The record gives the reactivity of an RNA of 177 nucleotides to 2A3 and DMS.
In probing experiments dimethyl sulfate is read out at A N1 and C N3, which are open when not base-paired.
For 2A3, 6,497 sequencing reads were counted.
For DMS, 6,008 sequencing reads were counted.
The data come from the RNA Mapping Database (RMDB), library M2PK50.
RNA sequence: GGGAACGACUCGAGUAGAGUCGAAAAAACCGUAAAUUCGUUUACGGUUAACCGCAACCGAGCCGAAAGGCAUUUUAUCCGUACGGUGGCGAAAGCCUAAAAUACCAUAGGCCUUCGGGCCUAUGAACCUAAGUCAAUUUUUCGAAAUUGACUUAGGAAAAGAAACAACAACAACAAC
Reactivity to 2A3 in 0.01 (KOAc 150mM, MgCl2 10mM, bicine 150mM(pH8.5), 24C), signal-to-noise 4, nucleotides 027 to 126: a010a010c030c000g000u030a050a000a020u100u080c180g050u080u010u000a000c010g000g000u020u010a020a020c050c000g020c030a020a010c010c010g020a020g020c000c010g050a080a020a010g020g000c000a000u020u060u020u040a090u050c030c000g040u080a060c030g010g040u020g020g010c020g030a100a030a040g040c010c010u080a090a080a040a040u130a070c030c040a000u000a000g000g000c000c000u020u070c190g060g010g000c000c000u010a000u000g010a010a010
Reactivity to DMS in 0.01 (KOAc 150mM, MgCl2 10mM, bicine 150mM(pH8.5), 24C), signal-to-noise 5, nucleotides 027 to 126: a040a000c000c000g010u010a000a010a020u000u020c170g020u000u000u000a000c000g000g000u000u000a030a110c080c010g010c050a040a040c040c040g020a180g010c000c000g000a070a090a130g010g010c030a070u000u010u000u010a110u010c110c100g000u010a100c030g010g020u000g010g010c000g000a080a080a110g010c010c020u000a050a040a060a070u000a090c170c010a020u000a000g010g010c000c000u000u010c190g020g000g020c000c000u000a000u000g000a070a120

The reactions ran in a buffer of 150 mM KOAc, 10 mM MgCl2 and 150 mM bicine (pH 8.5), at 24 C. For DMS the reverse transcriptase was MarathonRT.